[RMDB]
Source: RMDB library OK2TRN, as collected in RNAgym. Structure probing data (DMS) for a 177-nucleotide construct.
RNA sequence: GGGAACGACUCGAGUAGAGUCGAAAACACCGGCCCGUCGCGCUGUUCGGACAGCUCGCCGGGCGUCGCGGGCAGCGACGCGUUCUUCGCGAUCGGCGCGACGAGAUGCGGCGUCACGAUGAUCACAGGGCUCAUGAUAGUUCGCUAUCAUGAGCCCAAAAGAAACAACAACAACAAC
Reactivity to DMS in 0.01 (KOAc 150mM, MgCl2 10mM, bicine 150mM(pH8.5), 24C), signal-to-noise 1, nucleotides 027 to 126: c060a150c000c000g020g000c000c020c010g000u000c000g010c080g000c000u020g000u010u000c030g000g010a090c200a140g010c040u000c050g030c020c100g000g000g030c010g010u000c000g000c030g000g030g030c210a170g020c000g010a030c020g000c010g000u020u000c040u010u000c060g010c020g020a060u000c000g020g020c040g030c000g000a000c000g010a030g000a010u000g000c030g010g010c000g010u000c030a110c120g000a110u000g000a150u000c130a060c230a130